[RMDB]
RNA sequence: GGGAACGACUCGAGUAGAGUCGAAAAAAAAGAUAUGGAGGCUCAGAGAUCCUUACAGCUAAGACAGUGGAAUCGGAAACGAUUCCAUCGAGCUGUUGGGAUCGACGAAGAGCCUCCUAAGUCAAAACAAUGGUUGUAUCUUCGGAUACAACCAUUGAAAAGAAACAACAACAACAAC
Reactivity to DMS in 0.01 (KOAc 150mM, MgCl2 10mM, bicine 150mM(pH8.5), 24C), signal-to-noise 2, nucleotides 027 to 126: a100a060a120a160g000a040u000a300u010g010g000a010g010g010c010u010c000a050g000a210g000a020u000c000c000u000u000a050c000a000g020c000u000a190a120g000a150c300a160g000u000g000g010a030a010u000c000g050g000a070a060a180c000g000a000u000u000c000c000a000u000c060g010a010g040c010u000g010u010u000g000g000g010a020u000c020g000a100c220g000a080a080g010a010g010c010c000u000c000c000u000a000a040g020u030c020a080a080a100a210

Overview: Chemical mapping of a 177-nucleotide RNA with DMS. The reactions ran in a buffer of 150 mM KOAc, 10 mM MgCl2 and 150 mM bicine (pH 8.5), at 24 C. The DMS profile rests on 1,736 reads. For DMS the reverse transcriptase was MarathonRT. It was measured as part of the RMDB library TTRDES.